[RMDB]
RNA sequence: GGGAACGACUCGAGUAGAGUCGAAAACUCACAGAGUGACUGUGAGUCAGACACUCUCUCUCUCACUCUGUCUGACAGACUCAGUCAGAGACAGACUGACUCUCACUCUGACACACUGACAGUCUGAUCAUUAGUCUGCGUUCGCGCAGACUAAUGAAAAAGAAACAACAACAACAAC
Reactivity to 2A3 in 0.01 (KOAc 150mM, MgCl2 10mM, bicine 150mM(pH8.5), 24C), signal-to-noise 2, nucleotides 027 to 126: c000u010c020a060c010a020g000a000g030u060g040a040c020u160g060u070g290a000g000u000c010a000g060a010c040a040c140u050c000u000c000u000c000u000c000u010c050a010c000u010c000u000g000u000c020u020g080a100c070a080g020a010c010u000c040a010g000u030c000a000g000a000g000a020c040a030g020a030c020u010g020a010c000u000c000u010c030a010c010u010c010u000g040a010c010a010c000a020c060u140g120a050c020a050g060u030c010u030g010a060
Reactivity to DMS in 0.01 (KOAc 150mM, MgCl2 10mM, bicine 150mM(pH8.5), 24C), signal-to-noise 4, nucleotides 027 to 126: c010u010c050a280c020a010g000a130g000u000g000a070c300u000g010u000g000a040g000u000c030a030g000a130c150a130c190u000c010u010c110u000c000u000c010u000c090a080c000u000c030u010g000u000c040u000g010a150c150a090g000a040c040u010c110a030g010u000c120a030g010a020g010a040c090a050g010a080c030u000g000a060c050u000c030u000c010a030c020u000c020u010g000a150c120a090c150a090c150u000g000a080c180a070g000u000c020u000g000a230
Annotation:
Structure probing data (2A3 and DMS) for a 177-nucleotide construct. For 2A3, 3,537 sequencing reads were counted. The reactions ran in a buffer of 150 mM KOAc, 10 mM MgCl2 and 150 mM bicine (pH 8.5), at 24 C.